Background:
Chemical mapping of a 177-nucleotide RNA with 2A3 and DMS. The reactions ran in a buffer of 150 mM KOAc, 10 mM MgCl2 and 150 mM bicine (pH 8.5), at 24 C. For 2A3, 1,518 sequencing reads were counted. For 2A3 the reverse transcriptase was SuperScript II with manganese. For DMS, 1,281 sequencing reads were counted. Reactivities are given for positions 27 through 126.
RNA sequence: GGGAACGACUCGAGUAGAGUCGAAAAGGCAGCGAAUUCGUUCGCUGCCAAUACAGGACGUGGAGCCGGCUUCACGGCGCACGUCGAUGACGCCCGGGCCGCAGAAUCCAGAUUUCGAUCUGGAUAAGAUCUUCUAUGGGUUCGCCCAUAGAAGAUCAAAAGAAACAACAACAACAAC
Reactivity to 2A3 in 0.01 (KOAc 150mM, MgCl2 10mM, bicine 150mM(pH8.5), 24C), signal-to-noise 1, nucleotides 027 to 126: g000g010c010a000g000c030g010a000a010u060u110c200g100u080u000c010g000c010u000g000c000c000a000a000u010a000c010a000g050g000a010c010g000u000g060g030a150g050c010c000g000g030c090u240u190c120a110c100g020g000c010g050c000a000c040g000u000c000g020a140u100g040a000c100g020c000c000c000g010g010g010c040c020g070c040a050g090a170a020u050c000c000a010g020a020u000u070u170c120g050a010u010c000u010g000g000a000u000a010a010
Reactivity to DMS in 0.01 (KOAc 150mM, MgCl2 10mM, bicine 150mM(pH8.5), 24C), signal-to-noise 2, nucleotides 027 to 126: g000g010c000a000g020c000g000a030a010u010u000c260g040u000u000c000g010c020u020g020c000c000a000a010u000a150c130a090g000g040a000c060g000u000g010g010a170g050c020c010g030g000c300u010u020c130a130c020g040g000c000g020c050a020c010g000u000c000g020a050u010g000a110c130g000c020c010c000g020g000g010c030c020g010c130a070g000a110a070u000c000c000a000g020a030u000u000u020c180g010a040u000c000u000g010g000a020u000a030a080